Description: Structure probing data (2A3) for a 207-nucleotide construct. The RNA was probed in 150 mM KOAc, 10 mM MgCl2 and 150 mM bicine (pH 8.5) at 24 C.
[RMDB]
RNA sequence: GGGAACGACUCGAGUAGAGUCGAAAAAGCGUAGCGGUCCGCCGCUACGCAAGGCGCAUUUGAACUGUAUUGUACGCCUUGCAUAAAGCAAAAGUACUAAAAAAACGUGCCGUUACGACGGCACGAAAAAACAUCCAUUGGUUCGCCAAUGGAUGAAUCUCACCCAUAUGUUCGCAUAUGGGUGAGAAAAAGAAACAACAACAACAAC
Reactivity to 2A3 in 0.01 (KOAc 150mM, MgCl2 10mM, bicine 150mM(pH8.5), 24C), signal-to-noise 2, nucleotides 027 to 156: a000g020c000g000u000a000g000c000g010g000u030c040c130g050c050c000g000c110u000a000c010g000c010a000a020g000g000c020g000c050a100u040u060u300g120a100a040c120u120g060u260a150u090u040g050u040a040c010g000c000c000u000u020g000c020a030u120a120a250a040g040c040a000a010a000a040g060u010a060c080u270a110a060a010a000a000a020a030c020g000u000g000c000c000g000u010u030a030c180g000a020c010g050g030c000a010c000g050a000a000a000a000a000a000c000a000u000c000c000a000u000u000g010g010u020u020c110g010c020c000a000a000u000g000g000a000u000g000a010a000